[RMDB]
RNA sequence: GGGAACGACUCGAGUAGAGUCGAAAAGAUAUGGAGGCAGCGAGGAUCGGUCGGAUCGGAAACGAUCCAACCGGGAGCUGGCUCCUAAGUCAAAAGGAGGCGAAAGAGUUCGCUCUUUCGCCUCCAAUCGUUAUGGAAUGUUCGCAUUCCAUAACGAAAAAGAAACAACAACAACAAC
Reactivity to DMS in 0.01 (KOAc 150mM, MgCl2 10mM, bicine 150mM(pH8.5), 24C), signal-to-noise 2, nucleotides 027 to 126: g000a050u000a300u000g010g010a000g020g010c000a010g030c000g010a090g010g010a070u010c010g000g000u000c030g000g010a020u000c000g000g000a110a050a160c010g010a010u000c000c000a010a010c000c000g020g000g000a070g010c010u000g010g000c010u000c000c000u000a000a040g010u000c040a070a080a150a120g010g020a010g000g020c000g000a010a000a000g010a020g010u000u020c270g000c020u000c000u000u000u000c000g000c000c020u010c010c000a000a030